Conditions: 150 mM KOAc, 10 mM MgCl2 and 150 mM bicine (pH 8.5), 24 C. The record gives the reactivity of an RNA of 177 nucleotides to 2A3 and DMS. It was measured as part of the RMDB libraries RFM100 and RFMREP. 2A3 adducts were read by reverse transcription with SuperScript II with manganese. High 2A3 reactivity points to a flexible backbone, as in loops and unpaired stretches.

RNA sequence: GGGAACGACUCGAGUAGAGUCGAAAAAGGGAGGGAACGGUGCCUAGUGCGGCACCGGAGCUCGCCAGCACGCAGGAGUGAGGUGAGGAGGACGGCGGCCAGGGCGCGGAGAGCUUGCCGGCGCUCCCAUGUAACGAGAGUUCGCUCUCGUUACAUGAAAAGAAACAACAACAACAAC
Reactivity to 2A3 in 0.01 (KOAc 150mM, MgCl2 10mM, bicine 150mM(pH8.5), 24C), signal-to-noise 9, nucleotides 027 to 126: a000g090g010g020a080g020g010g030a080a030c010g010g010u000g000c000c010u120a130g130u090g200c100g020g000c000a000c000c000g000g000a010g020c000u020c020g060c010c010a040g050c020a010c030g050c060a060g030g090a070g050u090g020a050g010g050u070g030a050g020g020a030g020g020a030c040g010g040c010g010g000c020c020a050g010g020g010c050g000c020g020g040a060g000a010g060c040u070u130g030c010c000g030g000c010g000c010u010c010c010
Reactivity to DMS in 0.01 (KOAc 150mM, MgCl2 10mM, bicine 150mM(pH8.5), 24C), signal-to-noise 8, nucleotides 027 to 126: a100g000g000g010a080g000g000g000a110a140c020g010g000u000g010c000c000u010a190g020u040g020c200g010g010c010a010c000c000g000g000a080g010c030u000c040g000c010c010a120g000c050a060c060g000c100a100g000g010a090g000u010g000a100g000g000u010g000a090g000g000a090g000g010a110c100g000g000c070g000g000c050c070a090g010g000g000c050g000c080g010g000a090g000a110g010c040u010u020g000c030c030g010g000c050g000c040u000c020c040